[RMDB]
RNA sequence: GGGAACGACUCGAGUAGAGUCGAAAAAAUCAAAAAAUUUAUUUUUUACACGGAAACAAUGCCACAGUUGACUGAACCUGUCUUCUAACAGUAGUUAAUUGCCAGUGUUUCAAACAAGAUUUGAAAUACCAUCAAGAUCGUUCGCGAUCUUGAUGGUAAAAGAAACAACAACAACAAC
Reactivity to 2A3 in 0.01 (KOAc 150mM, MgCl2 10mM, bicine 150mM(pH8.5), 24C), signal-to-noise 1, nucleotides 027 to 126: a000a000u260c130a240a080a000a000a000a000u150u030u000a190u190u030u050u000u170u260a080c060a000c040g070g000a000a090a000c000a030a000u140g050c020c000a010c000a060g040u000u060g050a000c000u070g000a000a030c000c000u000g050u010c200u080u000c000u160a000a060c060a000g030u050a000g000u140u000a160a000u090u070g020c030c000a080g020u000g000u020u020u000c010a020a040a020c050a050a030g220a110u060u090u140g050a040a110a000u000

An RNA of 177 nucleotides, treated with 2A3 and read out base by base.
For 2A3 the reverse transcriptase was SuperScript II with manganese.
The 2A3 profile rests on 414 reads.